[RMDB]
RNA sequence: GGGAACGACUCGAGUAGAGUCGAAAAUGUAUAGGUUUUUGCUUAUGCACCAUGGUUGUCUGAGCAUGCAGCAUGCUUGUCUGCUCAUACGCCAUGGUUCCUGAGCAGGAGCCUUCAUUAACUACUGUGAGCCCUACUGUUUCGACAGUAGGGCUCAAAAAGAAACAACAACAACAAC
Reactivity to 2A3 in 0.01 (KOAc 150mM, MgCl2 10mM, bicine 150mM(pH8.5), 24C), signal-to-noise 1, nucleotides 027 to 126: u060g000u040a070u030a170g000g040u000u000u000u020u000g030c000u020u010a020u040g050c050a000c000c000a020u010g030g050u180u300g000u000c010u010g020a000g000c000a010u020g000c000a020g000c070a080u300g090c130u130u040g000u000c000u000g030c000u000c010a000u000a000c000g000c000c000a000u000g000g000u000u000c000c000u000g000a000g000c000a000g000g020a000g010c040c000u000u000c000a000u000u030a050a040c040u140a030c070u050g060